[RMDB]
Structure probing data (DMS and 2A3) for a 177-nucleotide construct. It was measured as part of the RMDB library RFMREP. Conditions: 150 mM KOAc, 10 mM MgCl2 and 150 mM bicine (pH 8.5), 24 C. DMS adducts were read by reverse transcription with MarathonRT.
RNA sequence: GGGAACGACUCGAGUAGAGUCGAAAAAGUACGAGAGGAACGGGGGUUCGUGACCUCUAGUUUAUCGGUUGUCCGACAGGGCAGUUGCCGAGUAGCCACGUCAUACGCGAAUAAAAGCUGAAAGCAUUCUUACUAAACUGUUCGCAGUUUAGUAAGAAAAAGAAACAACAACAACAAC
Reactivity to DMS in 0.01 (KOAc 150mM, MgCl2 10mM, bicine 150mM(pH8.5), 24C), signal-to-noise 4, nucleotides 027 to 126: a080g020u010a050c080g010a110g010a100g010g010a190a040c110g000g000g010g000g010u000u000c120g010u010g010a070c010c010u000c010u000a040g020u000u000u000a160u010c030g000g010u000u010g010u000c010c010g010a170c300a110g000g010g000c000a040g010u010u020g010c000c020g010a040g010u000a060g000c020c000a050c080g000u000c040a060u000a090c120g010c040g000a050a070u000a090a040a070a100g010c030u000g000a070a070a100g030c080a120u000
Reactivity to 2A3 in 0.01 (KOAc 150mM, MgCl2 10mM, bicine 150mM(pH8.5), 24C), signal-to-noise 2, nucleotides 027 to 126: a000g110u100a030c030g000a000g000a030g080g070a010a040c040g030g000g020g000g000u080u060c030g020u100g100a090c000c000u020c000u010a040g000u000u090u060a110u030c010g010g000u130u020g000u000c010c020g010a100c070a150g000g000g000c010a050g030u190u160g010c010c000g000a020g010u020a000g000c030c010a030c030g020u030c010a040u060a120c070g000c030g030a080a010u120a110a120a040a020g000c040u070g120a110a010a010g030c010a030u040